Notes:
Source: RMDB library M2PK50, as collected in RNAgym. The record gives the reactivity of an RNA of 177 nucleotides to DMS.
RNA sequence: GGGAACGACUCGAGUAGAGUCGAAAAUACUCACAUUUCGAUGUGAGUAACUGUCUAGUCGCUAGCGCCGAUCAAGCGCUAGCGACUAGACUUUAUUGAUGGCCAGCUAACCUUUCGAGGUUAGCAAUAGGUAUACACUUUUCGAAGUGUAUACCUAAAAAGAAACAACAACAACAAC
Reactivity to DMS in 0.01 (KOAc 150mM, MgCl2 10mM, bicine 150mM(pH8.5), 24C), signal-to-noise 3, nucleotides 027 to 126: u000a010c000u000c000a000c000a010u000u000u020c160g010a030u000g020u010g010a010g010u000a010a040c050u000g010u000c000u000a010g030u010c000g050c000u000a010g000c010g100c000c030g000a100u020c300a170a170g000c010g040c010u000a010g030c000g010a000c000u000a000g000a010c000u000u000u000a080u000u000g000a090u000g010g010c080c050a140g010c000u000a010a000c000c000u000u000u000c150g010a020g010g010u000u000a000g010c000a040a040

The reactions ran in a buffer of 150 mM KOAc, 10 mM MgCl2 and 150 mM bicine (pH 8.5), at 24 C.
DMS adducts were read by reverse transcription with MarathonRT.
For DMS, 4,153 sequencing reads were counted.